[RMDB]
RNA sequence: GGGAACGACUCGAGUAGAGUCGAAAAGGUUACGUUCGCGUAACCAAAAAUCCUAAGUCCUGUGGGAGAGCCGAGUAGGCAAUGAUGUCGGAAACGAUUGAGCCUACAAGGCUCUUUGAUCACAGGAUAUGGAAAAAAACCGAAGUUCGCUUCGGAAGAGCGAUAUAAACUUCGGUUUAUAUCGCUCAAAAGAAACAACAACAACAAC
Reactivity to DMS in 0.01 (KOAc 150mM, MgCl2 10mM, bicine 150mM(pH8.5), 24C), signal-to-noise 1, nucleotides 027 to 156: g030g000u000u000a010c000g000u000u010c300g060c020g000u000a000a020c020c020a000a080a050a080a100u000c000c000u000a040a300g010u000c000c000u030g000u010g030g000g030a030g030a030g030c000c000g030a300g040u000a050g020g050c040a050a100u000g000a020u000g060u000c020g020g060a160a180a260c020g000a030u000u000g000a050g000c000c010u010a020c020a000a300g020g000c000u000c000u000u000u000g020a170u000c010a020c010a120g030g000a010u000a010u030g000g040a000a000a050a060a040a130a220c010c000g000a020a300g010u000u010c140g050c000u000u000c000g000g010a170a120